About this RNA:
This 177-nucleotide RNA was probed chemically with 2A3 and DMS. Conditions: 150 mM KOAc, 10 mM MgCl2 and 150 mM bicine (pH 8.5), 24 C. 2A3 adducts were read by reverse transcription with SuperScript II with manganese.
[RMDB]
RNA sequence: GGGAACGACUCGAGUAGAGUCGAAAAUAAGUCUAGUUCGCUAGACUUACUAUCGGGAAAACAGCCUCCCGGCUCGAUCAGGCGGAUUCCGUCCUAGCGCUGCAACACACGUAUUCGUACGUGUGAACAACUUUAGGCCUUUCGAGGCCUAAAGUUGAAAAGAAACAACAACAACAAC
Reactivity to 2A3 in 0.01 (KOAc 150mM, MgCl2 10mM, bicine 150mM(pH8.5), 24C), signal-to-noise 1, nucleotides 027 to 126: u040a000a000g000u020c000u000a010g040u000u040c190g020c100u000a000g000a000c000u000u020a020c000u040a010u180c030g040g000g000a010a090a030a050c000a010g040c000c010u000c020c000c000g020g020c030u010c050g050a150u090c060a060g030g050c030g080g020a230u230u060c030c010g040u000c050c040u010a030g000c020g020c080u050g030c060a170a000c000a000c000a010c010g000u000a000u030u090c160g060u060a020c000g000u000g020u020g010a010a000
Reactivity to DMS in 0.01 (KOAc 150mM, MgCl2 10mM, bicine 150mM(pH8.5), 24C), signal-to-noise 1, nucleotides 027 to 126: u000a010a000g000u000c000u000a000g010u000u010c210g020c000u000a000g010a010c000u000u000a020c050u010a130u000c010g020g000g000a020a050a100a130c040a040g000c040c010u000c000c000c000g010g010c050u000c000g000a050u000c150a050g000g010c010g000g010a240u010u020c020c000g010u010c010c040u000a050g010c040g010c030u000g040c150a110a190c020a000c010a000c010g020u010a030u000u010c170g010u000a010c010g020u000g000u000g000a060a120